Overview: This 207-nucleotide RNA was probed chemically with 2A3. The 2A3 profile rests on 864 reads. For 2A3 the reverse transcriptase was SuperScript II with manganese. The RNA was probed in 150 mM KOAc, 10 mM MgCl2 and 150 mM bicine (pH 8.5) at 24 C.
RNA sequence: GGGAACGACUCGAGUAGAGUCGAAAAAGAGGAUCUGAUUGGUCCCACUCAUAUUUCCAUGGGUCACUAGGCAGCCCGCAGACUGAUUUUCCUUGGAUAGGUGCCUUCUCUUGAUCCAAUCAGCUAUGACCAGGAGCCAUGGGCCUCAGGACACAUAGAUCGCGUAGUUAUUCGUAACUACGCGAUCAAAAGAAACAACAACAACAAC
Reactivity to 2A3 in 0.01 (KOAc 150mM, MgCl2 10mM, bicine 150mM(pH8.5), 24C), signal-to-noise 2, nucleotides 027 to 156: a000g060a110g040g020a040u020c030u050g050a180u090u260g000g000u050c000c030c000a040c030u070c060a140u050a080u180u070u000c040c040a050u020g000g000g040u060c010a040c250u070a050g000g040c000a050g030c070c060c010g000c070a020g030a200c040u080g060a100u040u100u090u180c010c000u010u040g040g000a000u030a120g000g030u010g090c040c000u180u010c050u000c000u030u090g010a020u000c010c020a020a080u070c020a000g050c030u120a050u230g030a160c020c000a050g040g020a000g030c040c010a050u030g040g000g000c000c030u000c020a040g000g000a030c030a000c020a090u090a080